[RMDB]
RNA sequence: GGGAACGACUCGAGUAGAGUCGAAAAGGUAGCCCUGGUCGUAACCGCCUUGGUCGGGGUAAGCCGGUCGUUGCUCGGGCGGGCCCGGAGGGCCAGAGGGCACAUAGCUGCCCUCCUCGUGGCGAGCCCACCGACUCUAGUUCGCUAGAGUCGGUGGAAAAGAAACAACAACAACAAC
Reactivity to 2A3 in 0.01 (KOAc 150mM, MgCl2 10mM, bicine 150mM(pH8.5), 24C), signal-to-noise 2, nucleotides 027 to 126: g050g020u020a010g030c000c000c000u000g050g000u030c030g010u040a120a120c070c000g020c020c010u140u160g020g000u030c010g000g030g020g020u050a060a050g040c020c000g020g010u040c030g030u010u040g010c010u000c020g000g010g000c020g000g010g010c010c000c000g030g010a040g020g040g000c010c000a010g000a010g030g020g080c030a000c020a080u300a020g040c140u000g000c010c000c000u000c000c000u070c000g040u090g020g020c020g000a040g030c000
Reactivity to DMS in 0.01 (KOAc 150mM, MgCl2 10mM, bicine 150mM(pH8.5), 24C), signal-to-noise 1, nucleotides 027 to 126: g000g000u010a300g000c000c000c030u000g010g000u000c000g020u030a060a090c030c040g000c010c040u040u010g000g010u000c010g010g000g000g030u010a070a170g030c010c020g000g000u040c050g000u020u000g010c000u010c020g020g020g000c010g050g000g000c000c040c000g070g000a140g000g020g030c050c070a220g000a020g000g010g010c000a000c070a250u020a110g010c110u000g010c020c000c000u000c000c050u010c090g000u010g020g000c010g030a190g010c080

Structure probing data (2A3 and DMS) for a 177-nucleotide construct.
It was measured as part of the RMDB library OK1LIB.
For DMS the reverse transcriptase was MarathonRT.
Conditions: 150 mM KOAc, 10 mM MgCl2 and 150 mM bicine (pH 8.5), 24 C.
DMS (dimethyl sulfate) methylates the pairing face of unpaired adenines and cytosines.
The 2A3 profile rests on 1,893 reads.